[RMDB]
About this RNA: This 177-nucleotide RNA was probed chemically with DMS and 2A3. The RNA was probed in 150 mM KOAc, 10 mM MgCl2 and 150 mM bicine (pH 8.5) at 24 C. The 2A3 profile rests on 20,600 reads.

RNA sequence: GGGAACGACUCGAGUAGAGUCGAAAAGGCGGAAUCCCGAAAUCCCUCCAAAACGCGCGCAAAUAAAGGGAGGGAGGGAUGAUCCCGAAAGCGCGCGACGGGGUGAAGGCUCAACGGCCGAAUGCCAAUAGUACCUCCAUUUCGAUGGAGGUACUAUAAAAGAAACAACAACAACAAC
Reactivity to DMS in 0.01 (KOAc 150mM, MgCl2 10mM, bicine 150mM(pH8.5), 24C), signal-to-noise 7, nucleotides 027 to 126: g030g020c030g000g000a180a050u010c000c000c000g010a080a100a090u010c000c000c000u000c020c020a110a070a120a120c030g000c010g010c010g020c010a130a110a120u060a060a090a100g010g000g000a090g000g000g020a030g000g000g000a160u010g010a120u020c010c000c000g000a060a070a080g000c020g000c010g010c000g010a290c070g000g000g000g010u010g010a150a180g000g000c020u010c090a100a120c290g010g000c000c000g020a070a080u040g000c010c020a160
Reactivity to 2A3 in 0.01 (KOAc 150mM, MgCl2 10mM, bicine 150mM(pH8.5), 24C), signal-to-noise 9, nucleotides 027 to 126: g030g000c020g070g030a060a040u030c010c000c000g000a020a020a010u030c000c010c000u020c010c010a060a050a070a080c030g020c010g010c000g000c020a060a160a110u260a160a200a060g020g010g000a040g020g020g000a040g000g000g000a080u120g030a060u060c000c000c000g030a040a030a010g010c000g000c000g000c000g000a020c020g020g000g000g010u040g050a050a010g020g000c020u050c160a100a030c070g030g010c010c010g020a030a030u120g010c000c000a000
Annotation:
It was measured as part of the RMDB library OK1LIB. Reactivities are given for positions 27 through 126.